Structure probing data (2A3 and DMS) for a 207-nucleotide construct. The 2A3 profile rests on 3,660 reads. The data come from the RNA Mapping Database (RMDB), library M2RFPK.

RNA sequence: GGGAACGACUCGAGUAGAGUCGAAAAGCUUCCUCUUGGCGCGGAGGUUUAACUGCGCUCGCUCCCCAUAUCGGGGUGGGCGCACCGGAUUUACAAAUUAAAGUCCUUUAGGGAGCGGAAAGGGACAAAAACUUGCACGUGUUCGCACGUGCAAGAAGAAAAACAUAAAGUUCGCUUUAUGUUUUUCAAAAGAAACAACAACAACAAC
Reactivity to 2A3 in 0.01 (KOAc 150mM, MgCl2 10mM, bicine 150mM(pH8.5), 24C), signal-to-noise 4, nucleotides 027 to 156: g020c030u050u010c000c000u030c040u040u060g020g010c020g010c040g030g040a060g050g050u040u090u130a070a050c050u020g000c010g000c000u000c000g020c010u100c000c010c030c030a070u110a100u300c080g000g000g000g020u030g000g010g000c000g000c000a000c010c020g050g000a030u070u130u200a110c080a010a070a020u070u090a110a050a030g020u040c010c000u000u020u020a060g000g020g000a050g010c020g000g010a060a040a000g020g000g020a020c060a030a110a010a030a040c000u000u000g000c010a000c000g000u010g020u060u080c160g030c110a010c000g020u000g000c000a000a000g000a000a000
Reactivity to DMS in 0.01 (KOAc 150mM, MgCl2 10mM, bicine 150mM(pH8.5), 24C), signal-to-noise 2, nucleotides 027 to 156: g000c020u000u000c000c000u000c060u000u020g000g020c060g050c050g010g020a290g030g010u000u000u000a110a150c060u000g010c010g030c020u000c000g010c010u010c010c000c060c160a220u010a110u000c080g000g010g020g040u010g000g000g010c020g010c000a040c030c030g010g000a140u010u000u010a270c080a060a080a140u000u000a080a110a170g010u000c020c030u000u000u000a070g020g010g010a060g030c030g000g010a060a060a110g000g040g000a160c060a060a020a110a110a160c000u000u000g010c000a010c000g010u000g000u010u020c300g040c020a000c010g000u000g010c010a000a000g000a060a120
Reactivities are given for positions 27 through 156. The DMS profile rests on 3,325 reads.